RNA sequence: GGGAACGACUCGAGUAGAGUCGAAAAUACGCAGUGCACGGCGAAGGUGCUUCUGUCGGGAAGGCGAGCGGUUAAGAUUAAGCGUUUCUUCCUCCGCCACUUGUUGGCUUUCUUCGUCGAGUGGCACGUGUUAGGUUUGGUUCGCCAAACCUAACACAAAAGAAACAACAACAACAAC
Reactivity to DMS in 0.01 (KOAc 150mM, MgCl2 10mM, bicine 150mM(pH8.5), 24C), signal-to-noise 2, nucleotides 027 to 126: u010a080c060g020c140a110g020u000g030c000a090c000g030g000c020g000a020a020g010g020u000g000c030u010u000c110u010g010u000c070g000g010g000a040a010g020g000c300g000a090g000c030g000g010u000u000a020a180g010a140u000u000a040a080g000c060g000u010u000u020c030u000u000c020c000u010c050c030g000c040c020a010c100u000u010g010u000u000g010g000c020u000u000u000c000u000u010c020g010u000c010g000a140g010u000g010g000c000a020c030
Reactivity to 2A3 in 0.01 (KOAc 150mM, MgCl2 10mM, bicine 150mM(pH8.5), 24C), signal-to-noise 1, nucleotides 027 to 126: u220a040c030g090c050a020g010u010g000c010a010c040g000g060c040g000a030a020g040g010u060g070c000u060u130c040u150g090u050c000g000g000g020a060a030g040g070c080g010a020g030c000g030g060u060u020a070a110g040a240u060u130a040a020g120c010g050u020u120u080c000u070u040c000c000u020c050c000g000c010c000a030c040u100u110g110u180u050g090g000c040u010u170u020c030u030u060c040g020u010c000g010a040g120u080g070g000c030a030c060
Description:
An RNA of 177 nucleotides, treated with DMS and 2A3 and read out base by base. 2A3 adducts were read by reverse transcription with SuperScript II with manganese. The data come from the RNA Mapping Database (RMDB), library OK2TRN. DMS adducts were read by reverse transcription with MarathonRT.